[RMDB]
RNA sequence: GGGAACGACUCGAGUAGAGUCGAAAAGCUGGGAUUAUAGGCACCCGCCGCCACGCCCAACAAAUUUUUUGUAUUUUUAGUAGAGACAAGAUUUCACUAUGUUCGCUAGGCUGGUCUUGAACUCCUGACCUCAGGCGGAUUCACCCGCCUCAGCUUCGCAUAGGAAAGAGUUCGCUCUUUCCUAUGCAAAAGAAACAACAACAACAAC
Reactivity to 2A3 in 0.01 (KOAc 150mM, MgCl2 10mM, bicine 150mM(pH8.5), 24C), signal-to-noise 2, nucleotides 027 to 156: g060c080u050g020g000g000a030u040u080a080u230a230g060g000c060a100c030c030c050g060c080c000g000c010c010a030c020g020c010c070c000a000a040c060a000a080a050u110u030u060u060u080u060g020u060a100u040u050u060u050u120a080g030u020a000g020a010g010a040c060a080a040g000a130u080u110u040c030a060c030u060a060u130g070u060u080c040g050c030u000a010g050g000c080u050g010g000u020c010u060u110g030a040a020c010u040c010c030u050g070a090c000c010u050c050a010g000g000c020g060g000a020u180u160c050a020c000c000c010g000c000c000u020c010a000g010c000u080u160c060
An RNA of 207 nucleotides, treated with 2A3 and read out base by base. The data come from the RNA Mapping Database (RMDB), library OK3TST.